[RMDB]
An RNA of 177 nucleotides, treated with 2A3 and DMS and read out base by base. For 2A3, 2,600 sequencing reads were counted. Values are in units of 0.01, from 0 to 300, in steps of 10. For 2A3 the reverse transcriptase was SuperScript II with manganese. The data come from the RNA Mapping Database (RMDB), library OK2TST. For DMS the reverse transcriptase was MarathonRT. The DMS profile rests on 2,520 reads. Conditions: 150 mM KOAc, 10 mM MgCl2 and 150 mM bicine (pH 8.5), 24 C.
RNA sequence: GGGAACGACUCGAGUAGAGUCGAAAAUUGGUGUGGUCACCGUAUUCCACCGCAGUGCCGGCCGGCUCAACGAUGCCCUGAACGAUUUCCUGGUCUUCCCAGGAGCCAACGGUGUCGAUGCCGAUGAGCUUACUCAGGUUUUCGAACCUGAGUAAGCAAAAGAAACAACAACAACAAC
Reactivity to 2A3 in 0.01 (KOAc 150mM, MgCl2 10mM, bicine 150mM(pH8.5), 24C), signal-to-noise 2, nucleotides 027 to 126: u070u120g020g010u000g000u060g060g070u100c020a010c050c040g020u040a100u100u020c040c000a060c020c030g020c050a090g070u030g100c020c000g040g010c000c010g000g000c020u020c040a040a160c080g020a020u040g020c020c010c000u020g060a060a030c040g080a160u090u050u130c010c030u020g030g000u070c070u150u060c070c000c010a020g020g000a000g030c020c020a040a010c050g020g010u010g010u020c010g040a010u060g020c010c010g040a080u080g040a010
Reactivity to DMS in 0.01 (KOAc 150mM, MgCl2 10mM, bicine 150mM(pH8.5), 24C), signal-to-noise 3, nucleotides 027 to 126: u000u000g010g020u000g040u000g000g010u000c010a060c040c020g010u000a090u010u000c060c040a140c060c040g010c100a080g000u000g000c020c020g020g000c080c030g010g000c030u010c070a080a070c070g020a080u000g000c010c020c030u000g000a100a110c150g000a120u010u010u000c020c000u000g000g000u020c180u010u000c270c010c000a080g000g010a040g010c080c030a060a130c160g000g020u000g010u000c020g010a060u000g000c000c020g000a130u010g000a210